[RMDB]
RNA sequence: GGGAACGACUCGAGUAGAGUCGAAAAUGCUGGCAAGGGCCGGGGUAAUGACCCAGGGUAUGGUAAAAACGCUUGAGAUUGGAUAAUCCGCAGCCAAGCACCUUACCCGGAUUCAACGUCCGGAAAGGUGAAGGUUCAGAGACUAGGUGGCGGUCGGCUUAGUGAAAUAGUUCGCUAUUUCACUAAGAAAAGAAACAACAACAACAAC
Reactivity to 2A3 in 0.01 (KOAc 150mM, MgCl2 10mM, bicine 150mM(pH8.5), 24C), signal-to-noise 2, nucleotides 027 to 156: u050g000c030u050g000g010c040a120a110g070g000g010c020c040g010g000g010g010u100a160a080u110g100a090c020c020c040a020g030g020g020u110a050u090g000g020u090a040a050a030a070a060c020g040c040u090u080g050a080g020a210u070u130g050g000a040u050a170a040u100c030c030g000c030a010g000c010c000a030a030g020c000a000c000c000u010u050a060c010c020c000g000g010a010u060u020c080a110a050c070g010u000c000c010g020g000a020a020a010g000g000u000g030a050a010g010g000u020u020c030a020g030a020g010a110c010u060a030g030g000u020g010g000c010g020g000u060c020g020g000
Reactivity to DMS in 0.01 (KOAc 150mM, MgCl2 10mM, bicine 150mM(pH8.5), 24C), signal-to-noise 1, nucleotides 027 to 156: u000g000c010u000g000g000c070a160a130g000g010g040c010c060g000g000g010g040u000a050a100u000g000a150c000c010c010a100g020g040g020u000a020u000g020g000u000a030a040a080a050a060c120g000c030u000u010g010a090g000a140u010u020g000g020a130u000a080a060u000c010c000g040c020a100g040c020c020a070a100g020c000a010c000c000u000u040a110c120c000c040g010g010a030u000u000c150a170a180c170g000u000c000c010g010g000a150a030a020g020g030u010g000a050a060g010g020u000u000c040a100g000a170g010a110c060u000a050g030g030u000g000g050c040g020g000u000c000g010g000